[RMDB]
RNA sequence: GGGAACGACUCGAGUAGAGUCGAAAAGAAAAGAAAAGAAAGGAAGUAAAGACUAAUAACUACGCGCAACCGGAGGCUAAACCGGAGACGAACGCCAGUCCUUGCGAGUAUGGCAUUCAAAAGAAAAGAUAAAUACCUCAUUCGUGAGGUAUUUAUCAAAAGAAACAACAACAACAAC
Reactivity to DMS in 0.01 (KOAc 150mM, MgCl2 10mM, bicine 150mM(pH8.5), 24C), signal-to-noise 5, nucleotides 027 to 126: g000a070a040a060a070g000a070a050a060a070g000a060a090a050g000g030a090a070g010u020a080a080a100g000a120c060u000a060a050u030a090a090c090u000a030c070g000c050g000c090a080a080c030c040g010g000a100g000g000c060u020a020a070a090c050c010g000g000a120g010a060c130g000a050a050c090g010c020c020a030g010u010c050c030u010u020g000c080g000a070g000u010a050u020g000g010c050a090u000u010c060a080a040a060a080g000a060a090a090a110
Reactivity to 2A3 in 0.01 (KOAc 150mM, MgCl2 10mM, bicine 150mM(pH8.5), 24C), signal-to-noise 7, nucleotides 027 to 126: g050a000a040a000a000g070a010a100a010a000g120a040a080a010g080g070a050a040g030u140a060a120a040g090a050c050u050a030a120u050a120a010c050u080a040c040g010c000g000c060a020a040c030c020g020g000a010g100g000c070u100a070a040a060c020c010g010g020a030g030a010c060g020a100a000c040g000c010c000a010g040u060c000c010u040u070g030c040g010a010g030u060a070u080g010g010c030a020u100u060c040a070a040a030a080g120a030a060a010a000
Structure probing data (DMS and 2A3) for a 177-nucleotide construct.
For DMS, 11,003 sequencing reads were counted.
The RNA was probed in 150 mM KOAc, 10 mM MgCl2 and 150 mM bicine (pH 8.5) at 24 C.
Values are in units of 0.01, from 0 to 300, in steps of 10.
Values cover nucleotides 27 to 126.